Chemical mapping of a 207-nucleotide RNA with 2A3 and DMS. High 2A3 reactivity points to a flexible backbone, as in loops and unpaired stretches. It was measured as part of the RMDB library OK3TST.

[RMDB]
RNA sequence: GGGAACGACUCGAGUAGAGUCGAAAAGCAGAGUGAUCCAGUCCACAUCACGAGAAAACGUGUCCGAGGCAAUGAAAUAAUCAUAUUUGGGAAGCUCGACGAAGCCCAUGGACGACAUGCAGAAAGGCGACAUGGAGAUAUGUCCGUCGCGAACGCGCACCGUACAAAGAUUCGUCUUUGUACGGUGAAAAGAAACAACAACAACAAC
Reactivity to 2A3 in 0.01 (KOAc 150mM, MgCl2 10mM, bicine 150mM(pH8.5), 24C), signal-to-noise 6, nucleotides 027 to 156: g040c060a020g030a010g060u050g020a060u040c030c020a030g040u020c020c020a050c010a080u070c000a020c040g040a050g140a110a080a030a020c030g020u040g030u040c060c060g030a080g020g000c050a020a070u090g060a110a060a080u190a070a030u110c060a040u070a120u150u120u060g040g010g020a070a030g030c010u030c040g060a060c040g040a050a010g000c000c000c020a010u040g020g000a020c030g010a020c020a030u110g010c010a020g070a090a080a000g080g010c020g000a010c010a020u100g100g000a060g020a060u140a060u160g080u020c040c030g000u020c010g000c020g030a060a020c040g010c010g000
Reactivity to DMS in 0.01 (KOAc 150mM, MgCl2 10mM, bicine 150mM(pH8.5), 24C), signal-to-noise 4, nucleotides 027 to 156: g020c060a100g010a180g030u000g000a090u010c050c040a200g000u000c030c040a080c080a060u000c020a090c030g010a180g010a090a070a060a080c070g020u010g010u000c040c030g020a120g020g000c050a090a100u020g000a040a100a080u000a070a110u000c030a080u000a120u000u000u000g010g020g000a090a130g000c050u000c030g000a110c100g010a060a160g020c000c010c020a090u020g030g020a090c010g020a070c040a060u000g020c020a080g010a040a050a100g030g000c010g020a040c010a040u000g010g000a170g000a170u000a060u010g010u010c000c040g010u000c010g000c030g010a040a050c070g010c070g010
Annotation:
DMS adducts were read by reverse transcription with MarathonRT. Values cover nucleotides 27 to 156.